[RMDB]
RNA sequence: GGGAACGACUCGAGUAGAGUCGAAAACUUCAAAAAGUCAGCGGUGAAUGACUCGUCAGCGGCCGGCACAUCUCUGAAUGACGGCACGCAACGCUACAUCUAUACCGGCCCCGCUGCCGGCAACUCCGUUAGUGGAAGUGUUCGCACUUCCACUAACAAAAGAAACAACAACAACAAC
Reactivity to DMS in 0.01 (KOAc 150mM, MgCl2 10mM, bicine 150mM(pH8.5), 24C), signal-to-noise 1, nucleotides 027 to 126: c040u000u030c090a000a110a090a040a040g030u000c040a040g010c060g010g020u030g000a150a040u000g010a110c180u000c000g000u000c070a050g000c050g000g000c040c000g020g000c070a030c090a080u000c070u060c130u020g010a100a180u010g000a060c020g000g010c000a020c000g000c010a110a030c010g010c150u010a060c090a020u000c060u010a110u000a090c010c010g020g010c050c090c060c140g010c060u010g000c000c010g010g030c060a000a050c100u020c060c110
Reactivity to 2A3 in 0.01 (KOAc 150mM, MgCl2 10mM, bicine 150mM(pH8.5), 24C), signal-to-noise 1, nucleotides 027 to 126: c010u100u140c030a010a050a070a110a030g110u060c000a000g030c000g070g100u130g080a210a120u120g030a040c110u010c040g010u050c030a020g000c030g000g000c000c000g030g000c120a040c000a120u090c110u020c060u280g140a200a010u020g010a040c010g000g000c060a050c090g000c000a050a000c000g000c000u050a070c010a060u050c030u080a140u080a220c000c000g010g040c010c020c010c010g000c030u020g000c000c030g000g000c020a000a040c000u060c100c030
Overview: Conditions: 150 mM KOAc, 10 mM MgCl2 and 150 mM bicine (pH 8.5), 24 C. The record gives the reactivity of an RNA of 177 nucleotides to DMS and 2A3.